[RMDB]
RNA sequence: GGGAACGACUCGAGUAGAGUCGAAAAGUAGCACAUAGCUAUGGUGAUGCAAAUGUUGAAGAGGGCGAUGAAAUUGUUGUCACUGAAAUGGAGCAUCAUGCCAAUAUUGUUCCUUGGCAACAGUUAGAACACCCCGUACAUUCGUGUACGGGGUGUUAAAAGAAACAACAACAACAAC
Reactivity to DMS in 0.01 (KOAc 150mM, MgCl2 10mM, bicine 150mM(pH8.5), 24C), signal-to-noise 2, nucleotides 027 to 126: g020u010a040g050c020a070c200a030u020a210g040c020u000a030u000g020g000u020g000a000u000g020c130a030a060a160u010g000u010u020g010a120a050g020a050g030g000g000c070g020a070u000g020a050a100a090u000u050g020u040u000g010u010c060a050c120u060g000a060a070a110u040g000g000a210g050c000a010u010c160a020u000g010c030c070a060a070u020a090u000u050g000u000u020c020c010u000u010g050g010c040a010a090c040a050g000u000u040a060g000